[RMDB]
RNA sequence: GGGAACGACUCGAGUAGAGUCGAAAACUGCUGCACUACUUCAUCUGCCGCCUCAUGGGCUUGGGGGGAAAUGUGCGGAGCGAUGCAGACCUGAUAAGGGGCAAUGGGCUGCCCAACUCGGCCCUGCGCCGUAACCUAUCUUCGGAUAGGUUACGGCAAAAGAAACAACAACAACAAC
Reactivity to DMS in 0.01 (KOAc 150mM, MgCl2 10mM, bicine 150mM(pH8.5), 24C), signal-to-noise 1, nucleotides 027 to 126: c080u000g010c020u000g000c010a010c020u000a130c050u000u000c030a070u000c060u000g030c060c120g000c000c000u000c230a140u000g030g010g030c000u000u000g020g000g000g000g020g030a040a080a080u000g020u000g050c090g000g000a060g010c040g050a060u000g000c020a050g000a110c060c040u000g000a110u040a140a160g000g010g000g020c060a090a120u000g000g010g000c080u010g000c050c000c060a030a080c110u020c010g000g040c000c010c000u000g000c110
Source information: Conditions: 150 mM KOAc, 10 mM MgCl2 and 150 mM bicine (pH 8.5), 24 C. This 177-nucleotide RNA was probed chemically with DMS. Source: RMDB library OK2TRN, as collected in RNAgym. For DMS, 1,057 sequencing reads were counted. DMS adducts were read by reverse transcription with MarathonRT.